Source: RMDB library M2PK90, as collected in RNAgym. This 177-nucleotide RNA was probed chemically with DMS and 2A3. The DMS profile rests on 1,198 reads. The 2A3 profile rests on 2,193 reads. 2A3 adducts were read by reverse transcription with SuperScript II with manganese. Conditions: 150 mM KOAc, 10 mM MgCl2 and 150 mM bicine (pH 8.5), 24 C.
RNA sequence: GGGAACGACUCGAGUAGAGUCGAAAAAUAAAGCACGGCAAGCACAUGAAGCACAUGAAGCAGUACAAGCACAUGAAGCAGUACAAGCACUACAAGCAGUAGAAGCAGCCGAUGCACAUGAAAAAAACCUAACAGUCAAGUUCGCUUGACUGUUAGGAAAAGAAACAACAACAACAAC
Reactivity to DMS in 0.01 (KOAc 150mM, MgCl2 10mM, bicine 150mM(pH8.5), 24C), signal-to-noise 2, nucleotides 027 to 126: a070u010a050a110a090g040c020a050c050g030g020c000a060a260g000c050a080c030a020u000g010a090a120g030c190a170c010a010u000g000a130a110g020c030a170g000u000a070c100a050a100g000c020a000c070a040u000g000a050a170g010c030a080g010u000a010c020a050a110g000c040a070c050u000a060c060a080a040g010c180a100g010u000a040g020a100a220g030c030a150g000c020c020g000a120u000g020c010a050c110a040u000g010a010a000a070a000a040a060a140
Reactivity to 2A3 in 0.01 (KOAc 150mM, MgCl2 10mM, bicine 150mM(pH8.5), 24C), signal-to-noise 2, nucleotides 027 to 126: a000u100a000a110a030g000c000a010c000g000g000c030a000a130g030c050a020c000a080u080g100a160a010g130c030a020c010a110u060g040a120a020g000c000a000g070u060a020c060a120a090g000c000a040c000a150u100g040a070a030g000c020a000g010u000a010c020a030a060g030c030a010c040u050a030c030a190a050g210c090a010g040u050a010g030a100a010g000c040a010g020c020c020g020a010u010g050c000a010c010a060u120g100a080a050a010a000a000a000a010